[RMDB]
RNA sequence: GGGAACGACUCGAGUAGAGUCGAAAAGCCUUUGGCUUUUACGCAAGUUUUAUCAGCAUGUAAUCAAUGGUUGCAAAGAUACGGCAUGCUUGCUCUGCUAUAAGAGGAACCGACUUACUAGAGUUGACCUUGUAUGGAUGUUCGCAUCCAUACAAGGAAAAGAAACAACAACAACAAC
Reactivity to 2A3 in 0.01 (KOAc 150mM, MgCl2 10mM, bicine 150mM(pH8.5), 24C), signal-to-noise 3, nucleotides 027 to 126: g020c010c000u030u020u140g020g000c010u050u020u100u120a040c040g000c020a000a040g000u020u030u130u140a120u080c030a030g030c020a050u060g030u060a130a100u020c090a090a070u120g140g020u110u140g150c030a060a020a020g010a010u020a030c040g040g000c040a010u040g000c020u000u010g010c020u040c030u050g060c030u120a100u020a300a050g040a030g030g010a020a010c050c010g000a000c010u020u010a000c010u020a010g010a000g020u020u030g040a050
Reactivity to DMS in 0.01 (KOAc 150mM, MgCl2 10mM, bicine 150mM(pH8.5), 24C), signal-to-noise 4, nucleotides 027 to 126: g010c020c020u000u000u010g020g010c000u000u010u020u000a070c200g010c090a040a070g020u000u000u000u010a030u020c110a090g000c130a100u010g020u010a070a040u020c020a060a220u020g010g000u000u000g000c030a030a110a190g010a030u000a040c130g030g010c020a080u000g000c020u010u000g020c020u010c080u000g000c080u010a140u020a050a050g010a060g010g010a070a090c180c000g000a010c010u000u000a010c020u000a080g000a010g000u000u000g010a210
The record gives the reactivity of an RNA of 177 nucleotides to 2A3 and DMS.
DMS adducts were read by reverse transcription with MarathonRT.
For 2A3 the reverse transcriptase was SuperScript II with manganese.
Reactivities are given for positions 27 through 126.
It was measured as part of the RMDB library 15KREP.
The DMS profile rests on 2,970 reads.
As a SHAPE reagent, 2A3 marks flexible, mostly unpaired nucleotides at the ribose 2'-OH.